[RMDB]
RNA sequence: GGGAACGACUCGAGUAGAGUCGAAAAGGUGGAGUCGGCGUUUUUCGCCUCACUACAUCGGGAACAUACUUCCCUUGUAUGACGGUUUUUCCGCCGAUGUUUUCUUUAGUGAGCGACGACACCGAAAGGGAAGUGCUGAGUUCGCUCAGCAUUUCCCAAAAGAAACAACAACAACAAC
Reactivity to 2A3 in 0.01 (KOAc 150mM, MgCl2 10mM, bicine 150mM(pH8.5), 24C), signal-to-noise 9, nucleotides 027 to 126: g010g000u020g010g010a030g010u010c020g030g030c020g020u040u020u020u140u290c020g010c000c000u000c000a000c020u030a010c000a000u000c000g000g000g030a120a040c010a010u030a020c020u080u090c010c010c000u020u080g020u000a020u010g060a050c050g020g080u050u060u030u260u120c010c010g000c000c000g000a000u000g010u010u130u040u040c100u040u100u020a020g000u010g010a020g060c060g010a010c000g000a000c000a000c010c000g010a060a010a010
Reactivity to DMS in 0.01 (KOAc 150mM, MgCl2 10mM, bicine 150mM(pH8.5), 24C), signal-to-noise 9, nucleotides 027 to 126: g010g030u000g000g000a170g010u000c010g010g010c050g010u010u010u010u030u010c020g010c290c040u000c010a010c020u000a040c060a010u000c030g000g000g010a080a140c050a040u000a040c040u010u010c030c020c030u020u020g000u000a020u000g010a250c060g010g000u010u020u020u030u020c010c010g020c010c000g000a020u000g000u010u030u030u040c160u020u030u020a020g020u000g000a020g000c090g010a020c200g000a150c010a010c010c000g010a050a080a130
The record gives the reactivity of an RNA of 177 nucleotides to 2A3 and DMS. Reactivities are rounded to 0.1 and cut off at 0 and 3. The reactions ran in a buffer of 150 mM KOAc, 10 mM MgCl2 and 150 mM bicine (pH 8.5), at 24 C.